[RMDB]
RNA sequence: GGGAACGACUCGAGUAGAGUCGAAAACGGCCUGGCUUCGGCCAGGCCGAAAGAUGCAUUUUACGGCAAGAAAUCCCGGAACAUUGGCCCGGAAGCCUGAGAAAAGAGUACUGUUCGCAGUACUCAACGAAUACAGAGUGUUCGCACUCUGUAUUCGAAAAGAAACAACAACAACAAC
Reactivity to DMS in 0.01 (KOAc 150mM, MgCl2 10mM, bicine 150mM(pH8.5), 24C), signal-to-noise 2, nucleotides 027 to 126: c020g010g030c000c000u000g020g000c000u000u010c170g020g020c000c000a030g000g000c000c010g000a010a020a040g010a130u000g000c060a090u000u010u020u020a070c190g000g000c020a060a090g000a070a080a110u000c010c000c010g000g000a060a080c080a120u000u000g000g000c030c020c090g030g000a090a180g000c020c010u010g000a130g010a080a060a100a080g000a000g000u000a000c000u000g000u000u020c210g010c000a010g020u000a000c000u000c000a010a090
Reactivity to 2A3 in 0.01 (KOAc 150mM, MgCl2 10mM, bicine 150mM(pH8.5), 24C), signal-to-noise 1, nucleotides 027 to 126: c020g020g080c000c000u000g000g050c000u040u060c180g030g000c070c000a020g000g000c000c010g000a000a000a000g000a000u050g000c000a000u020u040u070u190a050c040g000g000c010a070a010g050a100a100a020u020c000c000c000g030g020a060a030c020a110u120u230g030g010c050c020c070g090g000a030a020g000c000c000u070g010a090g180a020a050a010a020g010a000g000u000a000c000u050g010u080u110c260g020c080a000g010u000a000c000u000c000a000a000
Structure probing data (DMS and 2A3) for a 177-nucleotide construct.
The reactions ran in a buffer of 150 mM KOAc, 10 mM MgCl2 and 150 mM bicine (pH 8.5), at 24 C.
Reactivities are given for positions 27 through 126.